[RMDB]
RNA sequence: GGGAACGACUCGAGUAGAGUCGAAAAGAUAUGGAAAUGGAGGCUCUUGGAUUUAAAUGUACAGCUGAGUGGUCGGAAACGACCACGAAAGCUGUACAUUUUGUCAGAGCUGACAUUUCCUAAGUCAGAAGAUUAUGAUGUUCGCAUCAUAAUCUUCAAAAGAAACAACAACAACAAC
Reactivity to DMS in 0.01 (KOAc 150mM, MgCl2 10mM, bicine 150mM(pH8.5), 24C), signal-to-noise 2, nucleotides 027 to 126: g020a050u000a300u000g000g000a010a010a020u010g010g000a300g000g010c000u000c000u010u000g010g020a000u000u010u000a000a000a010u010g010u020a010c010a000g000c000u010g000a300g030u000g010g040u010c010g040g010a130a130a300c000g020a040c000c040a000c010g000a080a090a020g020c000u000g000u000a000c010a000u000u000u000u010g010u010c010a040g000a020g030c000u000g000a260c010a000u000u000u000c000c000u000a020a060g020u000c040a150